[RMDB]
RNA sequence: GGGAACGACUCGAGUAGAGUCGAAAAUCACAAAACGGUUUAGCAUCAGGACACAAAGUGCUCGUCACUUUGUAACAGUUUCCAGUCGUCGUUUGGCAGAAACCGUUUUGAUGAUGUGACCGAGCGAACGAAAGUGCGUAUUCGUACGCACUUUCGUAAAAGAAACAACAACAACAAC
Reactivity to 2A3 in 0.01 (KOAc 150mM, MgCl2 10mM, bicine 150mM(pH8.5), 24C), signal-to-noise 3, nucleotides 027 to 126: u000c000a000c010a000a000a010a000c000g020g020u010u020u080a040g010c020a040u150c060a070g060g000a000c000a000c020a020a010a000g000u000g000c010u060c130g300u280c010a000c000u000u000u000g020u020a000a030c030a060g010u010u110u140c050c040a030g050u030c020g030u020c020g040u060u200u260g060g010c010a020g110a030a000a000c000c010g000u010u000u000u000g000a010u020g000a000u010g080u060g000a010c010c000g010a030g130c090g110a020
Reactivity to DMS in 0.01 (KOAc 150mM, MgCl2 10mM, bicine 150mM(pH8.5), 24C), signal-to-noise 2, nucleotides 027 to 126: u010c000a060c010a040a010a020a010c000g000g000u000u000u000a180g000c020a090u010c090a150g010g000a090c070a100c000a020a000a010g040u000g020c000u040c210g020u060c000a000c000u000u000u030g000u000a050a200c250a110g020u000u010u000c030c060a070g000u000c080g010u010c020g010u000u000u040g000g020c030a120g040a040a000a000c000c000g000u000u020u000u000g010a100u040g030a010u000g010u030g000a270c000c010g010a080g020c140g000a130